This 177-nucleotide RNA was probed chemically with DMS and 2A3. The RNA was probed in 150 mM KOAc, 10 mM MgCl2 and 150 mM bicine (pH 8.5) at 24 C. For DMS, 21,508 sequencing reads were counted. High DMS reactivity at an A or C suggests that its Watson-Crick edge is free. The data come from the RNA Mapping Database (RMDB), library OK2TRN.

RNA sequence: GGGAACGACUCGAGUAGAGUCGAAAAGAUGAAAGAGGAGCCACAGGUCCUGAAGGCUGCCCAGCUCAGCCUCCCCACCCAACCUGGGCUCUGAGGACCUGGCUUGGGAGGUGCUGCUCUUGGCAGCGGAUCUCUAUGAAUUCGUUCAUAGAGAUCCAAAAGAAACAACAACAACAAC
Reactivity to DMS in 0.01 (KOAc 150mM, MgCl2 10mM, bicine 150mM(pH8.5), 24C), signal-to-noise 9, nucleotides 027 to 126: g010a130u010g010a060a080a080g000a150g010g010a040g000c020c050a110c090a050g010g010u000c020c020u000g010a120a080g010g000c110u000g010c030c030c050a060g010c160u010c100a070g000c030c020u000c020c010c020c080a170c060c030c040a080a090c220c030u000g000g000g010c030u000c040u000g000a050g010g000a030c010c010u000g000g010c090u000u000g010g010g010a060g010g010u000g010c010u000g000c010u000c110u000u010g000g020c020a030g010c070
Reactivity to 2A3 in 0.01 (KOAc 150mM, MgCl2 10mM, bicine 150mM(pH8.5), 24C), signal-to-noise 5, nucleotides 027 to 126: g060a020u170g060a040a050a070g100a050g060g030a010g010c020c020a100c030a100g000g030u030c010c030u060g070a110a020g080g010c120u030g010c020c030c010a020g000c040u080c070a020g020c000c010u030c010c000c010c000a060c010c010c010a020a040c000c020u010g000g010g010c020u010c030u020g030a040g000g020a020c000c010u000g020g000c020u020u030g030g000g000a040g020g020u070g010c010u010g000c000u030c030u100u140g060g000c010a000g020c000